This 177-nucleotide RNA was probed chemically with 2A3 and DMS. For DMS the reverse transcriptase was MarathonRT. For 2A3, 42,130 sequencing reads were counted. Source: RMDB library OK2TST, as collected in RNAgym. For DMS, 45,474 sequencing reads were counted. Conditions: 150 mM KOAc, 10 mM MgCl2 and 150 mM bicine (pH 8.5), 24 C.
[RMDB]
RNA sequence: GGGAACGACUCGAGUAGAGUCGAAAAGCUCAUGCCGUACCGCCAGUAGGCUGCCUUGGUGACGCCUCGAAUGGCGGCGUUGAGUCCGGGGCAGUCGCCCCCACUCGUGAGGAUCCCGAAGGUGCGGUCUAACUACACAAUUCGUUGUGUAGUUAGAAAAAGAAACAACAACAACAAC
Reactivity to 2A3 in 0.01 (KOAc 150mM, MgCl2 10mM, bicine 150mM(pH8.5), 24C), signal-to-noise 9, nucleotides 027 to 126: g060c000u010c030a040u090g040c010c000g010u010a010c000c010g060c040c020a130g120u200a100g140g000c000u000g010c000c000u020u020g030g020u080g010a000c000g010c010c010u060c040g140a300a260u300g160g020c040g000g000c000g010u010u040g070a090g150u010c010c010g000g000g010g000c000a010g010u010c010g030c010c000c000c000c000a040c030u110c050g040u040g020a020g030g020a060u010c010c010c000g010a050a020g010g000u010g000c000g000g000
Reactivity to DMS in 0.01 (KOAc 150mM, MgCl2 10mM, bicine 150mM(pH8.5), 24C), signal-to-noise 9, nucleotides 027 to 126: g010c020u000c040a060u000g010c020c010g020u000a020c010c010g010c140c140a100g020u010a070g020g010c010u000g010c010c000u000u000g010g020u000g000a020c010g010c000c000u000c060g010a160a130u010g020g010c190g010g000c030g020u000u000g010a210g010u010c020c030g000g000g010g020c010a030g010u000c030g000c020c000c010c000c020a090c110u000c100g010u000g000a030g000g000a180u000c010c000c010g010a100a100g010g010u000g010c010g010g000